[RMDB]
RNA sequence: GGGAACGACUCGAGUAGAGUCGAAAAGGGAGCUAGGAGCAUGAGGGAGGCGGUGGAGCCAUGCCAUGGGAUGCCCUUCCCGAUUCCGUCCAUACCCGCUCCCAGAGGGUCGCCCAGCGAAUGGCGGGUCUUAUAAUUUCUUCGGAAAUUAUAAGACAAAAGAAACAACAACAACAAC
Reactivity to DMS in 0.01 (KOAc 150mM, MgCl2 10mM, bicine 150mM(pH8.5), 24C), signal-to-noise 8, nucleotides 027 to 126: g010g010g000a040g020c070u000a100g010g000a090g020c200a050u000g010a210g000g000g010a050g010g010c130g020g020u000g010g010a190g010c060c010a040u000g000c080c100a090u000g010g000g000a210u000g000c020c020c010u000u000c010c000c000g010a160u000u000c020c030g000u010c030c050a110u000a100c040c020c050g000c030u000c000c000c000a090g000a090g000g010g010u000c060g000c020c000c030a170g010c190g010a100a060u000g000g010c010g010g010
Reactivity to 2A3 in 0.01 (KOAc 150mM, MgCl2 10mM, bicine 150mM(pH8.5), 24C), signal-to-noise 3, nucleotides 027 to 126: g020g010g010a020g030c070u150a100g060g040a050g040c080a070u090g050a090g030g010g010a000g020g030c150g010g020u050g050g050a070g120c010c000a020u100g080c020c060a080u110g010g000g020a030u100g010c010c000c000u000u020c000c010c000g010a020u040u010c060c010g110u050c040c000a040u100a150c000c010c020g000c000u000c000c000c020a040g080a030g050g000g010u030c030g000c020c010c010a030g090c040g080a160a080u050g020g010c000g050g060